[RMDB]
RNA sequence: GGGAACGACUCGAGUAGAGUCGAAAAAGCUGGUAGUCCUACGGUACUACCAGCAUAAUUCGUGGUUCGAAAACCUCCCACGCAAAAAAACUAAGGAAAAACGCCGAGUAGUACGCUACUCGGCGAAGGUACCGGAAUCAGUUCGCUGAUUCCGGAAGCUCUAGUGUUAGUUCGCUAACACUAGAGCAAAAGAAACAACAACAACAAC
Reactivity to 2A3 in 0.01 (KOAc 150mM, MgCl2 10mM, bicine 150mM(pH8.5), 24C), signal-to-noise 1, nucleotides 027 to 156: a000g000c000u000g020g000u000a000g000u090c000c030u100a160c260g030g010u030a000c000u020a000c000c000a000g000c000a000u010a020a090u020u020c020g000u000g000g020u070u130c150g030a120a130a230a290c010c010u030c010c010c010a050c030g060c120a020a110a040a090a090a070a070c100u140a050a170g030g090a120a030a000a000a000c020g000c000c000g010a000g000u000a010g000u030a010c190g020c080u000a000c000u010c030g010g010c000g000a000a000g000g010u030a020c000c000g040g000a000a000u000c000a010g090u120u130c150g000c160u030g000a000u000u030c000c000g000g000a000a000

The record gives the reactivity of an RNA of 207 nucleotides to 2A3. The data come from the RNA Mapping Database (RMDB), library M2RFPK. The reactions ran in a buffer of 150 mM KOAc, 10 mM MgCl2 and 150 mM bicine (pH 8.5), at 24 C.